RNA sequence: GGGAACGACUCGAGUAGAGUCGAAAAUUAACAGACAAAUACUGCAGUGUUAAUGUAGUAGCUUGGCUUUACGCAGCAAUACUUAAUGGUUGCGCUUGGUUUGUAAAACCUAAUCGCACUAGUGUUGAAGGUGUCGAGUUCGCUCGACACAAAAGAAACAACAACAACAAC
Reactivity to 2A3 in 0.01 (KOAc 150mM, MgCl2 10mM, bicine 150mM(pH8.5), 24C), signal-to-noise 7, nucleotides 027 to 129: u060u030a070a010c030a050g110a020c020a020a050a020u060a010c010u030g000c010a020g040u020g040u300u190a100a110u070g010u050a010g000u000a030g030c100u050u050g020g000c000u030u130u060a070c060g020c020a020g000c010a060a040u020a030c010u130u300a060a050u220g170g000u130u070g010c000g000c000u020u040g030g080u020u030u100g200u170a140a100a000a000c010c020u040a020a040u060c000g010c020a010c020u050a040g010u000g020u080u000g040a060a010g110
Reactivity to DMS in 0.01 (KOAc 150mM, MgCl2 10mM, bicine 150mM(pH8.5), 24C), signal-to-noise 4, nucleotides 027 to 129: u030u060a050a110c140a080g040a080c060a050a050a030u010a040c040u030g000c070a090g000u040g040u070u050a070a020u030g020u020a020g040u030a040g000c110u040u030g010g020c030u030u070u030a040c090g030c070a080g050c020a040a090u020a070c040u010u070a100a080u000g050g050u010u000g000c060g000c150u030u010g020g000u040u000u050g020u020a060a040a050a010c000c020u000a030a040u020c000g010c020a030c090u040a070g020u000g000u000u000g020a050a060g020